[RMDB]
Notes:
The data come from the RNA Mapping Database (RMDB), library RNAMAK. An RNA of 207 nucleotides, treated with DMS and 2A3 and read out base by base. The 2A3 profile rests on 3,309 reads. Values cover nucleotides 27 to 156.
RNA sequence: GGGAACGACUCGAGUAGAGUCGAAAAGCGUACUACCUUGAGGUAUGUACCCUACCACCUACCCACCAUUCUCCCAAAUAGGAGAAUGAGGGUGGCGGGGAACAUACUACCCACCAAGGUAUCGCAAAACACAGGGUAUGUUCGCAUACCCUGUGAACACAGAAUGCACGUUCGCGUGCAUUCUGUGAAAAGAAACAACAACAACAAC
Reactivity to DMS in 0.01 (KOAc 150mM, MgCl2 10mM, bicine 150mM(pH8.5), 24C), signal-to-noise 1, nucleotides 027 to 156: g030c060g140u000a040c140u010a040c010c000u010u000g000a120g040g010u000a030u000g010u000a070c010c000c000u000a040c010c000a000c000c000u010a050c000c000c010a300c100c000a000u000u000c000u010c000c000c000a060a190a280u070a020g020g000a020g020a020a000u050g020a030g010g010g000u000g000g010c020g010g030g000g000a140a070c000a040u000a000c000u020a030c000c000c010a300c050c000a040a070g000g000u000a000u000c000g000c060a070a070a100a080c010a000c030a000g020g000g070u000a000u010g050u000u050c300g000c000a000u010a010c010c000c020u000g000u020g000a030a120
Reactivity to 2A3 in 0.01 (KOAc 150mM, MgCl2 10mM, bicine 150mM(pH8.5), 24C), signal-to-noise 4, nucleotides 027 to 156: g020c010g030u100a110c050u010a010c020c000u010u010g000a000g000g020u000a000u040g010u130a170c000c000c000u030a040c000c010a000c000c000u080a080c060c000c070a050c020c020a010u010u000c010u060c000c020c020a240a300a130u280a160g010g000a000g000a000a000u020g000a050g000g000g000u000g000g000c010g000g000g000g000a010a000c010a000u020a000c010u050a030c060c070c020a050c020c000a000a000g020g020u020a030u300c030g000c040a000a050a040a040c010a000c000a000g000g000g000u010a000u000g060u110u110c230g000c190a000u010a000c000c000c000u000g000u000g000a000a010